[RMDB]
RNA sequence: GGGAACGACUCGAGUAGAGUCGAAAAUAUUUCAGUACGUGUCGGUCAGACUGCAAGUAUCUUAAGAGGUGGAGUGACUCUCCCAAGUUCUCAUGGCGAAUCCUGCAUUUGAUUCAGUCCUGGCUCCCCACAAGUCUGCAAGAAUGGGCAAGUCCAACAUACCUUUUAGGUUCGCCUAAAAGGUAUGAAAAGAAACAACAACAACAAC
Reactivity to DMS in 0.01 (KOAc 150mM, MgCl2 10mM, bicine 150mM(pH8.5), 24C), signal-to-noise 3, nucleotides 027 to 156: u010a080u000u000u000c020a100g030u010a030c040g030u000g020u000c040g010g020u000c080a130g010a200c020u010g020c040a050a100g000u000a020u000c040u000u000a120a080g010a100g020g030u020g000g010a080g040u000g000a130c040u000c030u000c000c010c000a080a150g000u000u010c030u010c020a110u010g040g030c020g010a070a070u000c010c070u000g030c060a090u000u000u000g010a080u000u000c030a100g020u000c030c040u000g010g020c030u000c030c000c000c010a070c080a040a090g000u000c050u000g000c040a090a090g030a080a100u000g020g010g030c040a070a090g000u000c010c010a050a300
Reactivity to 2A3 in 0.01 (KOAc 150mM, MgCl2 10mM, bicine 150mM(pH8.5), 24C), signal-to-noise 5, nucleotides 027 to 156: u150a070u040u120u070c030a010g030u060a040c050g050u040g060u100c050g030g050u050c020a030g030a070c020u020g040c030a040a090g050u030a100u100c070u120u180a090a050g040a030g080g010u130g020g010a020g000u070g040a030c000u000c020u010c170c020c000a040a020g010u060u040c060u010c030a030u060g020g000c030g020a030a040u030c010c020u060g070c060a160u080u050u140g030a040u050u020c040a020g050u050c000c020u000g020g010c010u010c000c010c000c000a020c010a030a020g030u020c010u020g000c030a050a060g060a090a100u080g020g000g000c050a080a020g050u050c060c000a010a020